[RMDB]
RNA sequence: GGGAACGACUCGAGUAGAGUCGAAAAACUAGUAUGUACAGGGGUGAGUUGACCUGUCAUCUAGACUGCUGACCAUCAACUCACCGGUCGGCUGGAUGAUGUCCACAGAGUACGACAUCAGUACUCAGUGUAUUCACUAGUUCGCUGGUGGAUACACAAAAGAAACAACAACAACAAC
Reactivity to DMS in 0.01 (KOAc 150mM, MgCl2 10mM, bicine 150mM(pH8.5), 24C), signal-to-noise 9, nucleotides 027 to 126: a150c010u000a010g010u030a020u010g010u060a010c030a020g010g000g010g020u010g010a070g010u010u010g010a060c050c070u010g000u000c010a010u000c010u000a050g000a170c090u010g000c040u000g000a020c020c200a210u020c060a040a030c060u010c050a040c110c100g010g000u000c010g000g000c010u000g000g000a090u010g010a060u020g000u000c030c030a110c160a090g000a030g010u010a020c020g010a120c180a090u030c120a100g000u000a020c010u000c020a140
Reactivity to 2A3 in 0.01 (KOAc 150mM, MgCl2 10mM, bicine 150mM(pH8.5), 24C), signal-to-noise 9, nucleotides 027 to 126: a000c010u010a010g060u110a070u120g090u090a010c010a020g090g030g040g040u100g070a100g040u040u050g070a060c010c050u020g010u000c000a000u000c000u020a030g100a160c070u060g010c010u010g010a010c010c010a050u070c030a030a050c030u020c050a030c010c020g000g000u010c010g000g000c010u020g020g020a050u080g010a030u080g080u040c010c010a060c050a070g030a000g020u020a010c040g070a030c090a160u120c040a060g010u010a010c000u000c020a000